[RMDB]
RNA sequence: GGGAACGACUCGAGUAGAGUCGAAAACAUUUGCGCUUCGGCGCAAAUGAAAAUAAAAUAAGCUAGUUGCUCAUUUCUUGCCUAAAAUGAGAAAUAAAUAAAAAACGACGUGGUUCGCCACGUCGAACUGUAGAUCUAUCUUCGGAUAGAUCUACAGAAAAGAAACAACAACAACAAC
Reactivity to DMS in 0.01 (KOAc 150mM, MgCl2 10mM, bicine 150mM(pH8.5), 24C), signal-to-noise 2, nucleotides 027 to 126: c000a000u010u000u000g000c000g010c000u010u010c210g020g000c000g040c000a000a010a000u000g000a040a070a050a080u030a060a050a070a080u000a090a100g000c080u000a070g000u010u000g010c000u030c000a020u000u000u000c070u000u010g000c060c030u000a060a010a040a010u000g000a040g010a110a110a080u020a040a060a120u030a010a040a070a080a150a120c030g030a020c000g040u000g010g030u000u000c210g010c000c000a000c000g000u000c000g010a010a030
Reactivity to 2A3 in 0.01 (KOAc 150mM, MgCl2 10mM, bicine 150mM(pH8.5), 24C), signal-to-noise 2, nucleotides 027 to 126: c010a000u010u000u030g000c000g000c000u030u080c250g150g000c000g000c000a010a000a000u010g000a010a010a000a000u120a020a090a010a040u190a060a010g100c070u060a010g100u130u120g020c010u000c020a020u000u020u030c030u040u100g040c000c020u070a060a080a020a020u030g000a000g040a030a090a040u150a030a060a030u100a010a130a020a020a020a050c010g000a000c000g000u000g030g050u050u050c210g030c040c000a000c000g000u000c000g010a020a000

Chemical mapping of a 177-nucleotide RNA with DMS and 2A3. For DMS, 1,669 sequencing reads were counted. For DMS the reverse transcriptase was MarathonRT. It was measured as part of the RMDB library M2PK50. For 2A3, 2,220 sequencing reads were counted. 2A3 adducts were read by reverse transcription with SuperScript II with manganese.